Notes:
Source: RMDB library OK2TST, as collected in RNAgym. An RNA of 177 nucleotides, treated with DMS and 2A3 and read out base by base. 2A3 adducts were read by reverse transcription with SuperScript II with manganese. The RNA was probed in 150 mM KOAc, 10 mM MgCl2 and 150 mM bicine (pH 8.5) at 24 C. DMS adducts were read by reverse transcription with MarathonRT. 2A3 is a SHAPE reagent: it acylates the 2'-hydroxyl of flexible nucleotides of all four kinds. For DMS, 1,168 sequencing reads were counted. High DMS reactivity at an A or C suggests that its Watson-Crick edge is free.

RNA sequence: GGGAACGACUCGAGUAGAGUCGAAAACACGCGGAAUAUUGAGGUGCCGCCCAUACCAUCCAGAGGUUUUAGAAUGAUAUCGCCAUGUUCCUGAUGGAACUUGCGGAUGUGGUCUUUGCUACGGCUGACCGUUGCAAAGCUUCGGCUUUGCAACGGUAAAAGAAACAACAACAACAAC
Reactivity to DMS in 0.01 (KOAc 150mM, MgCl2 10mM, bicine 150mM(pH8.5), 24C), signal-to-noise 1, nucleotides 027 to 126: c120a100c160g010c100g010g020a030a110u010a060u010u000g010a140g010g030u010g000c050c010g020c010c070c030a080u000a030c080c030a070u010c030c030a090g000a180g000g010u000u000u010u000a120g020a120a050u010g000a050u010a060u000c010g010c010c120a000u000g000u000u000c000c020u000g020a180u020g000g000a020a000c000u000u000g000c120g010g000a060u000g020u000g000g010u000c040u010u000u000g000c040u000a080c070g000g040c070u010g010
Reactivity to 2A3 in 0.01 (KOAc 150mM, MgCl2 10mM, bicine 150mM(pH8.5), 24C), signal-to-noise 1, nucleotides 027 to 126: c010a010c010g130c040g100g100a100a050u100a140u180u210g050a120g000g120u000g000c000c000g080c070c000c000a060u150a060c020c030a040u060c000c090a080g010a170g170g040u000u090u000u140a030g030a150a050u030g080a060u090a020u170c040g020c000c030a030u150g040u020u030c010c010u050g030a150u300g020g000a020a020c070u000u040g080c060g000g040a050u060g060u100g060g010u000c000u090u060u110g000c010u060a010c000g000g120c070u010g050